[RMDB]
RNA sequence: GGGAACGACUCGAGUAGAGUCGAAAACUUUUCUUACUAGGUGUAAUUCGUUGGACAUAGAUCCAAUUUUUAACUUUUUUGUAUUCCUUGGAAUUUCUUUUUCCUGUUCCUGGUGGUAUCAAAACGCCAGCGGAUAGAGAUUCGUCUCUAUCCGCUGAAAAGAAACAACAACAACAAC
Reactivity to DMS in 0.01 (KOAc 150mM, MgCl2 10mM, bicine 150mM(pH8.5), 24C), signal-to-noise 1, nucleotides 027 to 126: c080u000u000u000u010c040u030u000a090c070u000a060g000g000u000g000u020a070a050u030u000c110g000u000u010g010g000a020c040a190u110a050g000a140u010c000c000a020a000u000u010u030u010u040a110a060c050u000u000u000u080u000u000g020u030a100u010u000c010c000u000u010g000g000a120a070u040u050u020c030u000u000u000u000u000c020c070u030g010u000u000c010c000u000g020g020u000g000g000u000a190u000c120a020a120a080a130c160g000c080
Reactivity to 2A3 in 0.01 (KOAc 150mM, MgCl2 10mM, bicine 150mM(pH8.5), 24C), signal-to-noise 5, nucleotides 027 to 126: c030u130u080u040u000c020u040u100a220c120u090a090g060g030u080g040u100a060a120u110u200c070g020u020u030g020g000a010c050a190u190a150g170a290u010c000c000a020a030u010u060u040u080u130a070a100c050u120u100u030u030u070u100g030u070a050u040u070c010c030u020u040g060g050a050a060u080u060u090c060u050u090u040u040u010c010c010u030g000u000u030c000c000u020g000g030u030g030g010u080a110u210c070a020a090a040a090c030g050c040

Conditions: 150 mM KOAc, 10 mM MgCl2 and 150 mM bicine (pH 8.5), 24 C. An RNA of 177 nucleotides, treated with DMS and 2A3 and read out base by base. Values cover nucleotides 27 to 126. For 2A3, 1,910 sequencing reads were counted.